[RMDB]
RNA sequence: GGGAACGACUCGAGUAGAGUCGAAAAAAGUUUAGAAGAGAUUAUCAGACUAGCGAUGCAUGAUGCCUGUUAGGCGGCUAAUGUUCAGCGAAACCUUAAUAGCAUGACUAUGAACGUAGAUGUCUAAGUGCCGAUAUGCUUGGACAGGGGUUCGACUGUAUAAGGUUCACUUCGGUGAACCUUAUACAAAAGAAACAACAACAACAAC
Reactivity to 2A3 in 0.01 (KOAc 150mM, MgCl2 10mM, bicine 150mM(pH8.5), 24C), signal-to-noise 1, nucleotides 027 to 156: a000a000g120u160u030u050a050g050a140a010g110a010g040a070u120u130a030u210c020a000g030a050c030u010a050g020c020g010a030u100g000c060a090u040g040a020u080g000c000c010u040g000u240u110a030g030g010c080g020g000c000u000a040a020u000g010u030u080c030a000g030c000g000a030a050a050c000c000u030u060a030a030u010a000g060c020a010u130g040a070c050u020a020u300g000a040a040c000g060u030a080g060a160u090g030u020c010u000a020a020g010u050g090c070c000g070a110u100a010u300g010c020u000u000g000g000a000c000a000g000g000g000g070u030u010c010g020a020c050u000

An RNA of 207 nucleotides, treated with 2A3 and read out base by base. Values cover nucleotides 27 to 156. The data come from the RNA Mapping Database (RMDB), library ARCHII. The RNA was probed in 150 mM KOAc, 10 mM MgCl2 and 150 mM bicine (pH 8.5) at 24 C.